[RMDB]
RNA sequence: GGGAACGACUCGAGUAGAGUCGAAAAGAUAUGGAGCGUGUAUGUUCCAACAGCUAUGUUCGGAAACGAACAUAGACAUGGAAAUACCGCUCCUAAGUCAAAUCAGCAGUCCUUCGGGACUGCUGAACGAUAGAACGAUGUUCGCAUCGUUCUAUCGAAAAGAAACAACAACAACAAC
Reactivity to DMS in 0.01 (KOAc 150mM, MgCl2 10mM, bicine 150mM(pH8.5), 24C), signal-to-noise 5, nucleotides 027 to 126: g010a050u000a300u000g000g010a010g020c000g010u010g010u000a000u010g010u010u000c000c000a040a050c300a190g000c000u000a000u000g000u010u000c000g010g000a090a090a220c000g010a010a010c000a000u000a000g000a040c070a240u010g000g000a050a090a030u000a020c010c000g010c000u000c010c000u000a010a050g010u010c030a070a140a150u000c000a000g010c000a010g000u000c000c000u000u030c240g040g000g010a010c000u000g010c000u000g010a000a050
Reactivity to 2A3 in 0.01 (KOAc 150mM, MgCl2 10mM, bicine 150mM(pH8.5), 24C), signal-to-noise 5, nucleotides 027 to 126: g010a010u050a020u120g010g000a000g000c030g020u300g050u190a020u070g300u080u080c020c020a060a040c060a050g000c000u000a000u010g000u000u000c000g030g000a050a070a050c010g000a000a010c000a000u010a000g020a000c020a200u300g000g000a000a040a010u000a010c000c000g000c000u000c000c000u000a010a000g000u000c020a000a020a220u030c000a000g000c000a000g000u020c020c000u080u190c300g140g000g000a000c000u000g000c000u000g000a000a000